[RMDB]
RNA sequence: GGGAACGACUCGAGUAGAGUCGAAAAGAAACCUCUGGAGUCCUCUAGACCGCAAGGAGGAAAUUACCAGCAGGGGGUGAUCCACCCGGAGAUGAGCGGACAAGCCACAUCCAGAGGACCCCUUCAGACACCUGAAGCUUCGGCUUCAGGAAAAGAAACAACAACAACAAC
Reactivity to 2A3 in 0.01 (KOAc 150mM, MgCl2 10mM, bicine 150mM(pH8.5), 24C), signal-to-noise 5, nucleotides 027 to 129: g040a010a050a010c000c000u010c010u010g010g010a030g030u020c010c000u040c050u050a070g050a100c040c060g080c140a110a100g030g020a020g030g050a010a070a020u120u080a060c010c030a000g050c020a010g010g010g000g000g000u060g020a060u040c010c010a050c000c050c000g040g000a090g000a030u110g010a020g030c020g040g060a100c070a050a010g040c010c010a080c000a150u010c010c000a000g010a010g020g010a010c030c000c000c000u030u120c060a120g010a090c010a020
Reactivity to DMS in 0.01 (KOAc 150mM, MgCl2 10mM, bicine 150mM(pH8.5), 24C), signal-to-noise 5, nucleotides 027 to 129: g020a180a110a090c030c010u040c000u030g020g000a050g030u020c000c000u040c030u050a090g020a040c060c030g020c170a170a070g000g000a030g010g010a050a050a060u000u000a090c040c050a070g060c190a070g010g020g000g010g040u050g030a080u040c000c030a170c000c030c020g010g100a150g060a080u070g050a110g060c000g010g020a080c120a080a120g000c050c040a090c000a250u020c020c020a000g000a040g030g040a130c070c010c020c080u050u030c120a060g010a210c300a090
Description:
Chemical mapping of a 170-nucleotide RNA with 2A3 and DMS. For 2A3 the reverse transcriptase was SuperScript II with manganese. Values cover nucleotides 27 to 129. The DMS profile rests on 10,061 reads.